[RMDB]
Structure probing data (2A3 and DMS) for a 177-nucleotide construct.
RNA sequence: GGGAACGACUCGAGUAGAGUCGAAAACUGACCAACGUUAACGCCCAGUUCCAGCGCGGUAUGGCGGCUUGUCAGACGCUGUUUACCAUUCUGGACAGUGAGCAGGAGAAAGAUGAAGGUAAGCGCAUCCCCUAUUAAAUUUCGAUUUAAUAGGGGAAAAAGAAACAACAACAACAAC
Reactivity to 2A3 in 0.01 (KOAc 150mM, MgCl2 10mM, bicine 150mM(pH8.5), 24C), signal-to-noise 5, nucleotides 027 to 126: c020u050g060a020c010c010a040a030c050g040u050u080a100a030c030g020c010c010c000a020g020u090u010c010c010a010g000c020g000c020g040g010u030a030u050g020g010c010g030g000c030u130u130g140u200c080a020g000a060c010g010c000u020g020u050u020u030a010c000c000a010u060u020c010u040g020g010a010c010a040g100u110g080a060g020c050a040g020g090a070g080a040a100a020g020a010u090g040a070a030g040g000u150a090a020g030c090g000c080a060
Reactivity to DMS in 0.01 (KOAc 150mM, MgCl2 10mM, bicine 150mM(pH8.5), 24C), signal-to-noise 9, nucleotides 027 to 126: c070u010g000a100c050c050a060a230c100g010u000u000a080a160c130g000c010c020c020a140g010u010u000c020c010a030g000c170g010c060g010g010u000a030u010g000g000c010g000g000c020u000u000g020u010c200a050g010a070c070g000c010u000g020u010u010u000a030c010c010a080u000u010c020u000g000g000a040c160a100g000u010g010a060g020c030a060g010g010a100g000a080a090a090g000a050u000g000a060a160g010g010u000a050a060g010c110g010c140a120
The DMS profile rests on 20,223 reads. The data come from the RNA Mapping Database (RMDB), library OK2TST. DMS adducts were read by reverse transcription with MarathonRT. Values cover nucleotides 27 to 126.